[RMDB]
RNA sequence: GGGAACGACUCGAGUAGAGUCGAAAACGACACGGGUUUGUUUACAGCCGAGAUUGGGCACCAUUCCACGGGUUUGGAGAGAUCAUCAGGGCGACCCUGUUCUACACUGUGGAGGACGCACUGAGGAGAACUACGUAAGCUUCGGCUUACGUAGUUCAAAAGAAACAACAACAACAAC
Reactivity to DMS in 0.01 (KOAc 150mM, MgCl2 10mM, bicine 150mM(pH8.5), 24C), signal-to-noise 2, nucleotides 027 to 126: c070g010a080c150a090c050g000g000g010u000u000u010g050u000u000u010a090c130a090g000c040c030g000a090g020a100u020u000g000g020g050c040a140c060c030a100u000u010c010c030a050c100g000g000g010u000u000u000g000g040a130g000a060g000a100u000c060a040u010c020a030g000g000g020c060g000a140c050c000c040u020g010u000u000c070u000a130c110a090c170u010g030u000g000g010a040g020g010a160c020g000c030a030c040u000g020a010g000g010a130
Reactivity to 2A3 in 0.01 (KOAc 150mM, MgCl2 10mM, bicine 150mM(pH8.5), 24C), signal-to-noise 1, nucleotides 027 to 126: c000g020a020c000a000c060g040g050g000u120u110u150g070u130u200u080a070c080a010g050c020c020g070a030g010a110u200u180g010g020g000c030a010c000c020a030u130u000c020c010a070c090g090g000g000u070u050u100g090g000a150g010a010g000a070u130c020a020u010c030a050g060g010g000c020g070a100c000c000c000u020g100u050u000c000u030a040c040a050c120u120g000u030g040g010a030g060g010a020c020g010c010a020c020u050g020a040g040g090a070